[RMDB]
RNA sequence: GGGAACGACUCGAGUAGAGUCGAAAACUCGGUGAACUCAGAAGCUGCACCAGGGCUGAAGAGUUUGGUGAUGUGAGAAGUGGAGUGUUACCACCUUCGGUUUGUGGGGCUCACCCACAGCCAAGGACGAGGACACUUCUGCAUCCCCUGGACACGAAUCACUAAAUUAUUUCGAUAAUUUAGUGAUAAAAGAAACAACAACAACAAC
Reactivity to 2A3 in 0.01 (KOAc 150mM, MgCl2 10mM, bicine 150mM(pH8.5), 24C), signal-to-noise 7, nucleotides 027 to 156: c020u020c030g040g050u070g020a010a000c010u000c020a010g020a100a010g020c020u130g030c100a110c120c090a190g080g050g000c020u020g010a050a020g000a000g000u030u030u060g010g000u020g000a010u010g030u050g220a070g020a080a010g020u040g020g040a090g050u140g090u170u120a090c010c010a010c020c010u030u040c120g010g000u170u300u090g000u020g000g010g020g000c160u170c140a220c010c000c000a000c000a000g000c000c000a000a000g040g010a130c090g050a140g020g010a000c000a000c000u000u010c000u000g010c000a010u010c030c010c000c010u050g070g030a020c030a010c140g060a060
Reactivity to DMS in 0.01 (KOAc 150mM, MgCl2 10mM, bicine 150mM(pH8.5), 24C), signal-to-noise 4, nucleotides 027 to 156: c020u000c030g030g000u000g010a030a010c020u010c030a280g000a300a150g010c030u000g010c070a160c110c090a160g020g010g010c030u010g000a240a130g010a100g020u000u000u000g020g000u000g000a050u010g010u000g000a080g020a040a060g020u000g000g010a060g020u000g010u010u000a130c000c020a090c000c030u000u010c100g070g030u010u010u010g020u000g020g010g000g000c190u000c170a140c010c000c020a010c020a020g000c010c000a030a030g020g000a090c070g010a250g020g000a160c000a020c000u000u000c000u010g000c020a070u000c000c000c010c020u000g000g010a130c000a080c090g000a170
Structure probing data (2A3 and DMS) for a 207-nucleotide construct. For DMS, 8,933 sequencing reads were counted. The RNA was probed in 150 mM KOAc, 10 mM MgCl2 and 150 mM bicine (pH 8.5) at 24 C. It was measured as part of the RMDB library OK3TST. Reactivities are given for positions 27 through 156. For DMS the reverse transcriptase was MarathonRT.